[RMDB]
RNA sequence: GGGAACGACUCGAGUAGAGUCGAAAAUUGACACAUUAGGGUUCUUGACCAUCUAUAUAGUAUGCUAGACGUUUACUUUUAGAGACAGUACUUAUGAAAACUCAAAAGGAAAAAUAUAUGUCACUCAAAAGGUACCCAAAAGAGGUAUUUACUCUUACACUAAGGUAAGAUUCGUCUUACCUUAGUGAAAAGAAACAACAACAACAAC
Reactivity to 2A3 in 0.01 (KOAc 150mM, MgCl2 10mM, bicine 150mM(pH8.5), 24C), signal-to-noise 4, nucleotides 027 to 156: u060u060g030a010c010a000c020a070u060u080a060g020g030g020u110u020c020u060u110g070a110c020c020a050u010c030u030a080u000a020u010a150g030u010a030u090g030c040u060a060g040a170c040g040u010u050u050a030c020u050u030u020u070a050g020a010g020a020c010a050g040u070a070c040u100u080a060u130g080a060a090a090a100c030u050c090a020a080a040a030g020g070a080a110a020a110a000u110a020u040a020u120g020u020c010a020c040u090c040a070a060a030a030g040g000u030a020c000c010c000a040a170a020a050g070a020g000g010u020a030u020u070u060a070c010u000c000u020u010a010
Reactivity to DMS in 0.01 (KOAc 150mM, MgCl2 10mM, bicine 150mM(pH8.5), 24C), signal-to-noise 2, nucleotides 027 to 156: u000u000g010a070c020a030c040a100u000u000a110g000g000g040u000u000c050u000u000g000a110c020c030a120u000c030u020a120u000a030u000a070g020u000a020u000g010c050u010a260g010a150c140g040u000u000u000a040c010u000u000u000u000a050g020a080g000a120c050a090g020u000a080c040u010u010a110u020g000a120a100a110a120c080u000c060a010a070a090a110g040g030a040a110a090a100a080u000a070u010a050u000g010u010c020a050c140u010c080a060a070a060a130g000g030u000a110c040c030c030a050a020a030a070g030a050g010g000u000a050u010u000u000a050c020u000c010u010u000a220
Conditions: 150 mM KOAc, 10 mM MgCl2 and 150 mM bicine (pH 8.5), 24 C. Chemical mapping of a 207-nucleotide RNA with 2A3 and DMS. For 2A3 the reverse transcriptase was SuperScript II with manganese. For DMS, 3,117 sequencing reads were counted. DMS adducts were read by reverse transcription with MarathonRT.